[RMDB]
RNA sequence: GGGAACGACUCGAGUAGAGUCGAAAACUGGGUAGUCUGAAGCAUAUUCUUCUACCAGGAAGUGGUAGUUUUGCCUAGUACCUGGUGACUGAGGAAGAAAUCAGUGACCUAAACUGACAAAUGAGCCUACUGAGGUGGCAUUGUUUAAAUGCACAAAUCUGUAGAAACUGUUCGCAGUUUCUACAGAAAAAGAAACAACAACAACAAC
Reactivity to 2A3 in 0.01 (KOAc 150mM, MgCl2 10mM, bicine 150mM(pH8.5), 24C), signal-to-noise 3, nucleotides 027 to 156: c030u060g040g010g000u020a030g060u070c070u090g060a060a020g070c060a060u040a110u220u020c010u020u000c000u030a010c000c000a010g020g020a090a030g070u060g040g010u040a060g030u070u060u300u200g000c010c000u010a020g040u060a130c010c000u010g030g010u020g050a080c060u040g010a030g030g030a100a030g040a060a080a030u030c000a010g020u020g090a020c010c000u040a070a100a070c100u090g040a000c020a010a110a050u090g010a020g000c010c000u060a080c060u170g070a020g020g040u030g010g030c030a020u030u010g040u020u160u050a040a100a050u100g010c060a010c050a070a060a070
Reactivity to DMS in 0.01 (KOAc 150mM, MgCl2 10mM, bicine 150mM(pH8.5), 24C), signal-to-noise 2, nucleotides 027 to 156: c020u000g040g010g040u000a040g050u000c050u000g000a110a070g020c100a120u000a150u000u000c000u000u000c010u000a090c030c000a000g020g000a100a200g000u000g000g030u000a090g030u000u000u000u000g010c000c020u010a080g020u000a100c040c060u010g010g030u000g040a100c070u000g010a050g050g040a070a190g000a110a090a120u010c020a050g010u010g000a110c030c040u010a020a060a080c040u000g020a020c040a030a070a050u000g010a300g030c080c010u000a090c060u010g000a120g010g040u010g020g000c010a090u000u000g000u010u000u000a040a070a080u000g030c040a090c040a050a060a190